This 177-nucleotide RNA was probed chemically with DMS and 2A3.
RNA sequence: GGGAACGACUCGAGUAGAGUCGAAAAGAUAUGGACAUGCCAAGAUCGAUAAGAAGAUGUCGGAAACGACAUACUUCUUUUGACGAUCGACGCAUGUCCUAAGUCAAAACGUCCCUUCGGGGACGAACGAAAAGCCUUAGUUCGCUAAGGCUUUUCGAAAAGAAACAACAACAACAAC
Reactivity to DMS in 0.01 (KOAc 150mM, MgCl2 10mM, bicine 150mM(pH8.5), 24C), signal-to-noise 3, nucleotides 027 to 126: g000a050u010a300u010g010g000a000c000a010u000g000c000c000a070a300g010a000u000c000g020a230u000a010a020g000a000a000g000a040u000g000u000c000g000g000a120a070a210c010g010a030c000a020u000a050c000u000u000c000u000u000u000u000g000a200c130g010a010u000c000g000a300c300g000c010a010u000g000u000c000c000u010a010a110g000u020c030a080a030a100a140c010g010u000c000c000c010u000u000c210g000g010g010g010a000c000g020a010a060
Reactivity to 2A3 in 0.01 (KOAc 150mM, MgCl2 10mM, bicine 150mM(pH8.5), 24C), signal-to-noise 1, nucleotides 027 to 126: g010a010u030a030u170g000g000a000c010a000u020g000c000c030a060a030g010a010u010c050g050a070u030a180a000g000a000a000g030a010u000g000u010c020g040g050a100a060a040c020g000a010c030a000u030a160c000u000u000c040u000u010u010u030g090a070c030g020a010u010c000g010a000c040g000c000a010u020g000u000c000c010u000a010a000g010u010c020a010a000a040a110c030g010u020c000c000c000u000u050c300g030g010g030g000a000c000g020a050a030
The data come from the RNA Mapping Database (RMDB), library TTRDES. The RNA was probed in 150 mM KOAc, 10 mM MgCl2 and 150 mM bicine (pH 8.5) at 24 C.